[RMDB]
RNA sequence: GGGAACGACUCGAGUAGAGUCGAAAAGAUAUGGAAUCAUUGGCAAGCCUAUCGGAAACGAUGAGGUGAUGACCCAAGAUUCCUAAGUCAAAAGUGAGUAGCCCUAGUUCGCUAGGGCUACUCACAAUCUAAGUGAAGAGUUCGCUCUUCACUUAGAAAAAGAAACAACAACAACAAC
Reactivity to 2A3 in 0.01 (KOAc 150mM, MgCl2 10mM, bicine 150mM(pH8.5), 24C), signal-to-noise 1, nucleotides 027 to 126: g000a010u110a060u080g010g010a000a000u020c100a300u070u010g020g000c030a100a050g000c000c000u010a010u000c000g040g080a030a010a020c040g000a060u210g300a050g060g010u030g060a120u210g050a070c000c000c000a030a000g020a000u000u000c000c000u020a150a000g030u030c020a040a070a070a030g020u000g000a010g000u030a040g020c060c000c000u000a030g070u050u150c290g080c190u000a000g000g030g020c000u030a000c000u000c040a030c030a000a020
Reactivity to DMS in 0.01 (KOAc 150mM, MgCl2 10mM, bicine 150mM(pH8.5), 24C), signal-to-noise 7, nucleotides 027 to 126: g010a050u000a300u000g000g000a010a000u000c000a090u000u000g000g010c040a080a300g030c000c000u000a070u000c000g000g000a090a090a200c010g010a010u000g000a030g010g010u000g010a080u010g010a120c300c000c030a020a030g000a030u000u000c000c000u000a020a080g000u000c040a100a060a110a130g010u010g010a010g000u000a000g000c000c000c000u000a000g010u000u010c210g020c000u010a000g000g000g000c000u000a000c000u000c000a000c000a030a040

Record summary:
Chemical mapping of a 177-nucleotide RNA with 2A3 and DMS. It was measured as part of the RMDB library TTRDEL. DMS adducts were read by reverse transcription with MarathonRT. The 2A3 profile rests on 1,807 reads. For DMS, 8,443 sequencing reads were counted.